[RMDB]
RNA sequence: GGGAACGACUCGAGUAGAGUCGAAAAUCGAAACGGCUGCGACCGAACACCAGGUACGGCAGCAGGGUCAGGUACGGCAUGAAUACCAACGAGGUGGCCCAGGCGAUCGCGCCCUGGGCGGUGCGCAGUACGGAGGGGAGUUCGCUCCCCUCCGUACAAAAGAAACAACAACAACAAC
Reactivity to DMS in 0.01 (KOAc 150mM, MgCl2 10mM, bicine 150mM(pH8.5), 24C), signal-to-noise 2, nucleotides 027 to 126: u010c030g010a090a100a090c080g020g000c030u000g040c000g020a040c020c000g000a090a190c150a100c040c000a120g000g020u020a140c060g000g010c200a070g020c090a070g060g000g010u000c020a030g000g000u000a090c160g000g000c090a090u010g000a090a090u000a090c010c040a120a160c170g000a050g050g020u000g000g000c000c000c000a030g010g000c030g000a120u010c220g000c060g010c160c020c000u000g000g010g020c000g000g000u000g000c020g010c030a090
This 177-nucleotide RNA was probed chemically with DMS.